[RMDB]
RNA sequence: GGGAACGACUCGAGUAGAGUCGAAAAAGCUUACAGCUGUAUGCUAAGUUUAAUUAGUUAAUGCUGCUAAUUAUGAAGCCUAAAAAGUUGUGUUUCCCUCGCUAUCCAGUGCUGUAAUUAAUGCUGUGAUAUUACUCUUCUUCGGAAGAGUAAUAUCAAAAGAAACAACAACAACAAC
Reactivity to 2A3 in 0.01 (KOAc 150mM, MgCl2 10mM, bicine 150mM(pH8.5), 24C), signal-to-noise 2, nucleotides 027 to 126: a000g040c010u040u050a010c020a030g000c030u050g050u120a010u090g020c000u050a040a090g010u130u150u160a040a060u020u010a010g000u000u080a110a070u150g130c120u020g000c000u030a010a010u060u020a020u100g120a040a030g020c020c030u120a070a050a020a020a010g050u080u060g050u040g010u030u030u010c010c000c020u000c050g010c010u050a060u030c010c020a010g020u010g050c000u040g090u150a090a090u120u120a090a060u190g080c030u050g040u010
Reactivity to DMS in 0.01 (KOAc 150mM, MgCl2 10mM, bicine 150mM(pH8.5), 24C), signal-to-noise 4, nucleotides 027 to 126: a110g000c060u000u000a070c040a050g000c020u000g010u010a050u010g010c020u000a060a120g000u000u010u010a050a050u000u000a010g000u000u000a060a110u010g020c190u000g000c040u010a020a040u010u000a030u010g010a130a070g010c010c080u010a030a070a070a070a080g000u000u000g010u000g000u000u000u000c000c010c010u000c100g010c090u000a070u000c080c070a060g010u000g020c030u010g010u000a040a080u000u000a080a050u010g000c040u000g000u010